This 207-nucleotide RNA was probed chemically with 2A3. The 2A3 profile rests on 1,050 reads. The RNA was probed in 150 mM KOAc, 10 mM MgCl2 and 150 mM bicine (pH 8.5) at 24 C. For 2A3 the reverse transcriptase was SuperScript II with manganese. Source: RMDB library OK3TST, as collected in RNAgym.

[RMDB]
RNA sequence: GGGAACGACUCGAGUAGAGUCGAAAAGGAGAGAACGUUAAGGUUUCAGGUACCGUGAUUACAUUGGGAGAACAGGGGUACAAAGUGUCGUUGGAUCUGAGGGAGGGAACCAGGCUGGCAAUGGCUGAGGCGCUGCUGAACGCAGCAUGUGCCCCAAGCCUGUCACUUUUUUCGAAAAGUGACAGGCAAAAGAAACAACAACAACAAC
Reactivity to 2A3 in 0.01 (KOAc 150mM, MgCl2 10mM, bicine 150mM(pH8.5), 24C), signal-to-noise 2, nucleotides 027 to 156: g050g010a040g020a010g000a090a000c100g000u050u080a080a020g010g000u010u050u100c080a040g020g000u000a010c020c040g040u030g030a080u090u080a090c090a110u090u150g090g020g000a050g020a050a060c060a100g010g000g000g010u070a090c040a030a140a000g090u090g020u030c030g050u080u050g030g000a050u010c040u040g000a040g010g040g020a020g000g000g020a000a050c040c000a030g080g000c050u050g030g000c020a080a130u150g000g030c040u060g000a040g040g000c030g000c010u000g000c020u030g080a080a070c090g000c070a000g000c000a000u070g040u010g000c000c010c010c000a010a020